[RMDB]
RNA sequence: GGGAACGACUCGAGUAGAGUCGAAAACACUUCUUUGACGUGACUCUCUUUGGUAAACAAGGAGAAGCGCUCAAUAAUUACCUCACCAAAGGUAAGCAGGUGGGCAUCGAGGGGCAACUUCGUCAAGAGUGUGGUACAGUUUCGACUGUACCACACUAAAAGAAACAACAACAACAAC
Reactivity to DMS in 0.01 (KOAc 150mM, MgCl2 10mM, bicine 150mM(pH8.5), 24C), signal-to-noise 1, nucleotides 027 to 126: c070a060c090u040u000c050u030u010u000g000a060c010g020u000g000a170c150u000c000u000c010u000u000u000g000g030u000a100a140a220c040a100a000g000g010a020g000a040a110g000c070g000c020u000c010a070a010u000a070a070u000u000a000c060c010u010c050a150c200c190a030a080a020g000g000u000a000a010g000c080a080g010g000u000g000g000g000c020a090u000c060g000a050g040g000g010g000c090a040a060c090u000u000c030g010u000c040a010a050g010
Reactivity to 2A3 in 0.01 (KOAc 150mM, MgCl2 10mM, bicine 150mM(pH8.5), 24C), signal-to-noise 1, nucleotides 027 to 126: c030a010c040u090u070c020u030u070u050g000a010c010g040u040g080a090c000u000c000u020c000u000u070u000g070g010u150a270a300a120c000a060a000g030g000a010g000a040a000g000c050g010c020u010c030a020a030u090a080a040u070u040a010c000c010u020c020a110c030c060a250a200a020g080g020u030a040a010g050c050a030g000g010u050g050g030g000c040a020u070c080g040a090g010g000g030g000c010a040a030c030u030u050c040g040u080c010a030a010g050